[RMDB]
RNA sequence: GGGAACGACUCGAGUAGAGUCGAAAACUAUUCACUGAACUUAUUGAUGAAAACUUUAAAUGCGUCAAGUACAUCAAAAGAGGAAACAGAGGGAAAGAACCAGGUUGGCAAACAAGCAAAAAGGCAAUCGUUCUUCUUAGUUCGCUAAGAAGAACGAAAAAGAAACAACAACAACAAC
Reactivity to DMS in 0.01 (KOAc 150mM, MgCl2 10mM, bicine 150mM(pH8.5), 24C), signal-to-noise 3, nucleotides 027 to 126: c000u000a060u040u010c000a090c070u000g040a060a190c040u000u000a110u000u000g000a030u000g000a140a050a100a050c040u000u000u020a050a050a130u010g000c090g010u000c110a030a030g000u020a130c050a050u020c030a010a020a110a070g020a050g000g010a060a040a080c050a070g010a050g000g020g010a030a020a020g010a060a110c070c050a020g000g020u020u020g000g020c110a040a070a070c140a010a070g000c090a030a010a090a070a050g000g010c040a090a100
Reactivity to 2A3 in 0.01 (KOAc 150mM, MgCl2 10mM, bicine 150mM(pH8.5), 24C), signal-to-noise 2, nucleotides 027 to 126: c030u060a070u050u110c090a060c090u030g090a080a020c020u100u120a070u080u190g050a030u000g030a050a210a000a000c000u140u100u180a050a240a080u220g070c020g050u070c030a020a000g030u020a080c000a040u010c010a010a010a010a060g090a010g020g030a030a040a000c020a020g030a060g030g040g030a110a000a000g000a020a000c040c000a010g100g000u080u020g010g040c000a090a050a050c020a060a060g050c040a000a050a060a000a000g020g000c030a000a040
Structure probing data (DMS and 2A3) for a 177-nucleotide construct. The reactions ran in a buffer of 150 mM KOAc, 10 mM MgCl2 and 150 mM bicine (pH 8.5), at 24 C. It was measured as part of the RMDB libraries RFM100 and RFMREP. For 2A3 the reverse transcriptase was SuperScript II with manganese. For DMS the reverse transcriptase was MarathonRT.